[RMDB]
RNA sequence: GGGAACGACUCGAGUAGAGUCGAAAAAUCCUGCAGCAGCCUCCCCACCAUCGCUUAGGAUCUUAUCUACCGCUUUCGAUGCCCAUGCCCCCCUUUCUUCUUCCGAACGUUUUCCUAUCAACACCUUGACCGGUGAUGUGUUUAAUAUUUGACAUAAUCUGACUAUCGAAUUCGUUCGAUAGUCAGAAAAAGAAACAACAACAACAAC
Reactivity to DMS in 0.01 (KOAc 150mM, MgCl2 10mM, bicine 150mM(pH8.5), 24C), signal-to-noise 1, nucleotides 027 to 156: a060u000c010c010u010g040c000a100g010c060a080g030c020c020u000c030c020c010c000a110c020c020a100u000c060g060c040u000u000a090g010g010a130u000c050u010u010a070u020c030u000a080c050c010g020c080u000u000u000c020g010a090u050g000c000c000c030a120u000g020c000c000c000c000c010c010u000u030u020c040u000u000c020u000u020c010c060g000a100a110c040g010u000u000u000u020c020c030u000a210u000c060a020a120c020a070c040c020u000u000g010a120c150c110g040g010u000g010a110u000g020u000g000u000u010u010a040a130u000a090u000u000u030g020a140c020a020u000a070a220
An RNA of 207 nucleotides, treated with DMS and read out base by base. Source: RMDB library OK3TST, as collected in RNAgym. The RNA was probed in 150 mM KOAc, 10 mM MgCl2 and 150 mM bicine (pH 8.5) at 24 C. For DMS the reverse transcriptase was MarathonRT. For DMS, 2,223 sequencing reads were counted.